An RNA of 177 nucleotides, treated with DMS and 2A3 and read out base by base. The DMS profile rests on 1,636 reads. For DMS the reverse transcriptase was MarathonRT. Conditions: 150 mM KOAc, 10 mM MgCl2 and 150 mM bicine (pH 8.5), 24 C.
[RMDB]
RNA sequence: GGGAACGACUCGAGUAGAGUCGAAAAUUGGCGGACAUUAUAACUUCUGCCUCGCGAGGAACGGGAUGGACUUGUUCGCCCUGCUAGAGGCAGGUUAGGGUCCUGGGACGACCUUGUACCCAGACGGGUCCCAAUUGUGGUUCGCCACAAUUGGGACAAAAGAAACAACAACAACAAC
Reactivity to DMS in 0.01 (KOAc 150mM, MgCl2 10mM, bicine 150mM(pH8.5), 24C), signal-to-noise 2, nucleotides 027 to 126: u000u000g010g000c020g000g030a010c070a080u040u000a110u010a030a060c060u020u000c000u010g000c000c020u010c010g010c070g000a030g030g020a050a090c080g010g000g020a200u010g020g020a120c060u020u010g000u010u000c030g010c070c000c010u020g020c020u020a140g020a030g010g020c010a010g000g060u010u010a060g000g020g010u000c030c000u000g010g000g010a090c130g040a130c080c070u010u000g010u040a070c000c000c000a110g000a100c200g020g020
Reactivity to 2A3 in 0.01 (KOAc 150mM, MgCl2 10mM, bicine 150mM(pH8.5), 24C), signal-to-noise 2, nucleotides 027 to 126: u050u040g050g000c030g030g020a030c060a060u110u130a140u200a280a040c060u210u010c000u020g020c000c000u020c000g000c060g040a130g070g030a030a060c030g000g080g060a140u200g080g140a050c030u120u290g000u040u050c020g200c010c000c000u030g000c020u040a080g000a010g100g000c010a000g000g000u000u020a040g070g000g010u000c030c050u020g030g070g010a010c040g040a070c020c010u040u130g040u080a130c000c000c000a010g050a020c130g080g010